[RMDB]
RNA sequence: GGGAACGACUCGAGUAGAGUCGAAAAUCACUUUGGGACGCUUAGAAUUUGAGCGGCUAAAUUUUGAGGUUCGGAAGAACCUGACGAACUGGUCGUGGCUCAAUUCAAUUUCUUUGAUGUCGCUUUUAAGAGAGAGUUCGAGUGAGAGUGGUAAUGGCUAGAUUGAGUGCUUCGGUACUUAGUCUAGAAAAGAAACAACAACAACAAC
Reactivity to DMS in 0.01 (KOAc 150mM, MgCl2 10mM, bicine 150mM(pH8.5), 24C), signal-to-noise 4, nucleotides 027 to 156: u000c040a020c030u000u000u000g030g010g000a040c030g010c020u000u010a100g000a160a140u000u000u000g000a030g030c010g010g000c000u010a030a030a070u000u000u000u000g010a170g010g020u000u030c010g030g050a170a290g000a010a020c000c000u000g010a110c090g010a050a090c070u000g030g010u010c040g030u000g040g030c020u010c030a050a100u000u000c030a070a090u000u000u000c030u000u000u010g010a120u000g030u000c040g020c030u000u010u000u000a070a090g010a260g010a070g020a070g030u000u000c030g010a110g020u000g010a090g020a100g030u010g010g010u000a040a080u000g010g000
Reactivity to 2A3 in 0.01 (KOAc 150mM, MgCl2 10mM, bicine 150mM(pH8.5), 24C), signal-to-noise 4, nucleotides 027 to 156: u020c000a000c020u050u030u030g070g000g030a000c000g000c020u020u050a020g030a090a080u080u050u100g000a010g010c000g000g010c000u050a050a050a080u070u060u030u130g050a000g010g000u000u000c000g020g070a070a010g000a010a070c000c000u000g030a020c000g010a020a010c050u040g020g000u030c010g030u030g100g000c010u000c050a010a050u080u010c010a030a030u030u070u020c050u050u050u030g040a110u060g020u010c010g050c050u030u040u040u070a050a010g030a000g000a000g000a000g020u050u220c090g030a000g010u050g010a050g000a020g030u070g000g030u080a110a100u120g060g030